[RMDB]
RNA sequence: GGGAACGACUCGAGUAGAGUCGAAAAUGAUGAUUAAUCUCUGUUUGUUGGGUGCGGCCCAUUAAAUAGUCCAAGGAGACAGAAAAAUAGUCUGCUAUUUUUAAAAGAUUCUCUACUUUAGGCGAAGCCCCUAAUUAUUUUUCGAAAUAAUUAGGGGAAAAGAAACAACAACAACAAC
Reactivity to DMS in 0.01 (KOAc 150mM, MgCl2 10mM, bicine 150mM(pH8.5), 24C), signal-to-noise 2, nucleotides 027 to 126: u030g010a100u020g010a090u040u010a060a090u030c050u000c040u020g010u000u010u010g010u000u000g010g000g030u010g010c070g000g000c000c020c050a060u040u010a050a080a070u020a070g010u010c040c030a070a090g010g010a070g000a040c040a110g000a010a040a040a070a090u000a030g000u050c090u020g000c040u020a010u000u000u000u030u050a050a150a090a200g000a070u000u040c000u010c000u000a040c040u010u000u010a080g020g000c050g030a140a200g010
Reactivity to 2A3 in 0.01 (KOAc 150mM, MgCl2 10mM, bicine 150mM(pH8.5), 24C), signal-to-noise 1, nucleotides 027 to 126: u060g060a040u030g000a010u130u000a100a120u030c030u000c010u040g050u010u120u020g100u000u010g010g000g020u060g040c070g040g050c000c000c000a000u020u110a010a030a040u050a030g060u030c060c050a030a040g110g000a070g060a010c000a000g150a010a130a000a080a000u020a000g060u060c040u040g080c010u080a130u020u050u000u020u130a060a190a020a010g130a110u180u030c030u000c000u010a020c000u080u000u080a060g030g000c010g000a060a000g060